Structure probing data (DMS) for a 177-nucleotide construct. The reactions ran in a buffer of 150 mM KOAc, 10 mM MgCl2 and 150 mM bicine (pH 8.5), at 24 C. The DMS profile rests on 942 reads. DMS adducts were read by reverse transcription with MarathonRT. Values cover nucleotides 27 to 126.

[RMDB]
RNA sequence: GGGAACGACUCGAGUAGAGUCGAAAAUAACCGGAAAUUUCUUCCAGAUCUUUCCGGCUUUUUAUUAUUUAACUUUCGUUCAGCACACUAAACAUCCCGUCUCGCAUCCCCUUAACUGGCUGUUUAACUUAUACGUUCAGUUCGCUGAACGUAUAAGAAAAGAAACAACAACAACAAC
Reactivity to DMS in 0.01 (KOAc 150mM, MgCl2 10mM, bicine 150mM(pH8.5), 24C), signal-to-noise 1, nucleotides 027 to 126: u010a070a050c000c000g000g000a040a010a010u000u010u010c000u010u020c210c300a170g010a000u000c000u000u020u000c010c000g010g020c040u000u010u030u000u010a020u010u030a080u010u000u000a050a070c050u000u010u010c070g020u020u000c030a070g020c030a080c090a020c080u000a040a060a060c080a080u000c030c030c010g010u000c020u000c010g010c080a090u000c000c000c010c090u000u000a040a040c110u010g020g030c050u000g000u000u010u010a070a160